The data come from the RNA Mapping Database (RMDB), library OK2TST. This 177-nucleotide RNA was probed chemically with DMS. Reactivities are given for positions 27 through 126. DMS adducts were read by reverse transcription with MarathonRT.

[RMDB]
RNA sequence: GGGAACGACUCGAGUAGAGUCGAAAACUAGAAGGGAAAGUCAGAGCUAUGGGGAUCAAGGUUUCCUUGUACGACUUAUGGGGGCCUACUUUGGUGGUGCAAAUCACAGGUAAGACCAGCAAGUAUGCUAGAGAAGUCUCUUCGGAGACUUCUCUAGAAAAGAAACAACAACAACAAC
Reactivity to DMS in 0.01 (KOAc 150mM, MgCl2 10mM, bicine 150mM(pH8.5), 24C), signal-to-noise 1, nucleotides 027 to 126: c030u010a130g000a090a100g000g010g000a040a120a130g020u010c070a070g000a150g000c040u010a040u010g020g000g040g010a130u010c090a080a060g000g030u000u000u000c030c010u000u000g040u020a090c180g020a070c070u000u000a070u000g000g040g020g000g020c030c040u010a020c040u000u000u000g030g050u000g030g020u010g000c240a040a090a050u000c030a020c010a040g000g010u000a020a080g010a040c030c050a050g040c090a070a070g020u000a030u000g010